[RMDB]
RNA sequence: GGGAACGACUCGAGUAGAGUCGAAAACAGCGGGCUGCGGGCCGGGCAAUUUGUCCGCGCUGCGGGCGUAGAGGUCGGCAAGGUCGCCAAGGUAACGCUGAUCGACGGGGACAAGCAAGUAUUGGUGGUAGCACUCCUUAUUCGUAAGGAGUGCUACAAAAGAAACAACAACAACAAC
Reactivity to DMS in 0.01 (KOAc 150mM, MgCl2 10mM, bicine 150mM(pH8.5), 24C), signal-to-noise 2, nucleotides 027 to 126: c090a150g040c100g000g000g040c050u010g000c070g020g010g000c010c010g010g030g000c020a040a100u000u010u000g000u010c030c000g010c110g020c130u020g000c070g000g000g000c030g010u000a020g000a290g000g000u030c050g000g010c000a060a120g000g000u010c060g000c020c060a040a050g020g010u050a110a120c120g020c040u010g000a070u040c050g000a080c040g000g010g000g010a050c070a060a090g000c120a090a060g010u030a080u010u000g020g000u010g040
Reactivity to 2A3 in 0.01 (KOAc 150mM, MgCl2 10mM, bicine 150mM(pH8.5), 24C), signal-to-noise 3, nucleotides 027 to 126: c020a000g040c030g020g010g020c040u070g020c040g090g000g000c010c020g000g000g010c020a050a100u080u050u230g020u010c010c010g010c040g050c110u190g020c000g020g000g000c010g000u030a020g030a020g040g070u010c010g000g010c020a030a100g170g010u070c030g000c030c030a010a010g050g010u030a100a030c020g000c030u040g020a080u050c050g040a070c030g020g000g030g010a030c030a080a030g070c020a070a010g060u070a170u100u130g070g010u040g030

An RNA of 177 nucleotides, treated with DMS and 2A3 and read out base by base. For 2A3, 2,534 sequencing reads were counted. It was measured as part of the RMDB library OK1LIB.